RNA sequence: GGGAACGACUCGAGUAGAGUCGAAAAGCUGAGUUAUGAUGGUCUUGCACAUCAUAGUGUGAGGAGUGAGGCUCACACACUCAGCAAGACCAGUAUGCUGUUGUGGUCUACAGCACAGCAGCUUGUGCCUCACUCCACAAGCGCAUACAGAUGUAGACGUAGGUACCUAGUUCGCUAGGUACCUACGAAAAGAAACAACAACAACAAC
Reactivity to 2A3 in 0.01 (KOAc 150mM, MgCl2 10mM, bicine 150mM(pH8.5), 24C), signal-to-noise 6, nucleotides 027 to 156: g020c010u020g000a000g030u100u080a040u070g020a010u010g030g090u090c110u240u300g060c220a070c000a070u030c010a030u060a060g020u020g000u020g010a030g000g000a000g000u010g000a000g010g010c010u050c010a020c000a000c000a010c000u040c020a000g000c010a010a000g070a040c000c000a020g030u090a130u130g000c010u010g020u010u000g010u010g020g020u010c000u000a000c010a030g020c050a020c020a080g010c010a010g000c000u010u030g020u030g010c000c000u020c000a010c010u000c000c010a010c010a010a010g030c030g000c070a050u110a180c060a090g110a100u050g020u010a000g000a020
Reactivity to DMS in 0.01 (KOAc 150mM, MgCl2 10mM, bicine 150mM(pH8.5), 24C), signal-to-noise 2, nucleotides 027 to 156: g050c090u010g000a040g010u000u000a060u020g020a050u010g000g000u000c120u000u000g050c060a160c030a070u020c060a050u000a150g000u030g050u000g010a100g000g010a080g020u010g000a010g010g050c020u000c020a020c040a060c090a300c010u000c020a150g020c020a060a070g020a170c020c040a250g010u000a050u010g000c010u010g000u000u000g040u000g020g020u010c000u000a010c040a070g020c010a090c070a090g000c050a120g010c040u010u000g020u000g020c020c010u010c030a090c030u000c050c000a030c040a040a080g030c060g020c030a220u010a190c100a080g000a150u000g010u000a030g000a020